[RMDB]
RNA sequence: GGGAACGACUCGAGUAGAGUCGAAAACUAGUGACUAGCUAGGGUACGAUCGGAUCAGAGACGAUCUCAUGCGACUGACGGAUCGAUGCUCUAGGAUAUGAUCGUGUAUCGAUCUGACACGCUAGGAGUUAGUGGGUCCAUUCGUGGACCCACUAACAAAAGAAACAACAACAACAAC
Reactivity to 2A3 in 0.01 (KOAc 150mM, MgCl2 10mM, bicine 150mM(pH8.5), 24C), signal-to-noise 2, nucleotides 027 to 126: c010u000a000g020u010g100a100c060u010a080g060c010u000a000g030g000g000u010a010c000g010a000u000c020g030g070a160u010c000a000g040a020g050a100c010g030a070u030c090u070c150a140u300g020c000g040a070c050u010g020a000c010g140g000a000u010c000g150a200u020g010c010u010c000u040a020g000g020a030u040a080u130g020a010u040c010g010u100g060u140a120u240c000g000a010u020c020u010g030a010c000a000c110g000c010u010a000g030g040a060
Reactivity to DMS in 0.01 (KOAc 150mM, MgCl2 10mM, bicine 150mM(pH8.5), 24C), signal-to-noise 3, nucleotides 027 to 126: c000u010a000g010u000g010a170c140u000a070g020c020u000a010g000g000g010u010a030c010g000a010u000c030g010g030a180u000c010a020g010a070g030a180c020g000a100u010c210u010c280a050u000g020c020g000a290c020u000g020a020c070g000g010a030u000c000g020a080u000g000c000u000c010u000a010g000g000a150u020a060u000g000a020u000c010g030u000g000u000a100u000c010g010a020u000c010u000g000a140c160a110c070g000c020u000a030g000g020a150
Chemical mapping of a 177-nucleotide RNA with 2A3 and DMS. Reactivities are given for positions 27 through 126. For 2A3 the reverse transcriptase was SuperScript II with manganese. DMS adducts were read by reverse transcription with MarathonRT.